Source: RMDB library RNAMAK, as collected in RNAgym. This 207-nucleotide RNA was probed chemically with DMS and 2A3. For DMS, 2,750 sequencing reads were counted. The RNA was probed in 150 mM KOAc, 10 mM MgCl2 and 150 mM bicine (pH 8.5) at 24 C. For 2A3, 1,799 sequencing reads were counted. Values cover nucleotides 27 to 156.
RNA sequence: GGGAACGACUCGAGUAGAGUCGAAAACCAUUGUUCGCAAUGGGAAAAGAUAUGGAGUGUAAUGCGUAUUGUCAGAGCACUCAUCGGAAACGAUGAGGAGCUCUUGGAUUUAUACGCCACUUACACUCCUAAGUCCACAAGGUCCCUUCGGGGACAAUAGAAGUCUACUUUUCGAAGUAGACUUCUAAAAAGAAACAACAACAACAAC
Reactivity to DMS in 0.01 (KOAc 150mM, MgCl2 10mM, bicine 150mM(pH8.5), 24C), signal-to-noise 1, nucleotides 027 to 156: c000c000a170u000u000g010u000u010c260g070c010a050a040u000g040g000g000a110a050a080a080g000a080u020a300u000g030g010a030g020u030g000u000a090a030u000g000c010g050u000a010u010u000g000u020c010a070g000a020g090c000a080c010u000c010a010u000c000g000g010a200a170a250c000g020a010u020g020a000g020g000a070g060c010u000c010u000u010g000g030a050u010u010u010a010u010a010c020g010c010c050a030c160u000u000a020c010a030c000u000c010c000u000a020a070g000u050c010c030a070c090a110a110g010g000u000c000c000c000u000u020c290g030g020g000g000a010c010a020a090
Reactivity to 2A3 in 0.01 (KOAc 150mM, MgCl2 10mM, bicine 150mM(pH8.5), 24C), signal-to-noise 2, nucleotides 027 to 156: c010c000a010u010u000g070u040u080c220g020c130a010a000u010g010g000g050a050a140a020a090g070a050u120a120u170g000g000a000g010u000g010u040a040a080u300g000c010g010u000a010u000u020g030u020c000a000g000a000g000c010a010c000u000c000a000u010c000g000g000a070a050a070c000g000a000u000g000a000g030g040a090g000c010u000c020u040u050g010g010a000u000u230u120a000u000a000c000g000c000c000a030c000u000u000a000c000a010c010u010c000c000u000a000a000g000u000c000c010a090c020a040a080g130g020u020c000c010c000u020u030c130g090g000g000g000a000c000a000a000